[RMDB]
RNA sequence: GGGAACGACUCGAGUAGAGUCGAAAAGAGGCUGCAGAUAGUCAAAGGGAAGAGGCCAUAGCUGACCAGCGGGAAGGGGCUGCAGGUAAUCAGAGGGCAGGGGCCCCAGCUGACCAGGGGGCAGAGGCUGUCAAAUCAGUUUCGACUGAUUUGACAGAAAAGAAACAACAACAACAAC
Reactivity to DMS in 0.01 (KOAc 150mM, MgCl2 10mM, bicine 150mM(pH8.5), 24C), signal-to-noise 1, nucleotides 027 to 126: g000a150g010g000c050u000g020c080a050g010a110u000a060g020u010c160a070a100a100g000g000g010a060a080g010a110g000g010c030c060a000u000a140g030c040u000g000a110c130c020a030g000c090g050g010g050a190a100g010g000g000g000c040u000g040c050a060g010g000u000a060a040u000c060a080g010a130g010g000g000c070a090g000g020g020g040c050c010c010c030a070g040c050u010g000a080c100c060a070g020g020g010g010g010c030a060g000a050g000g000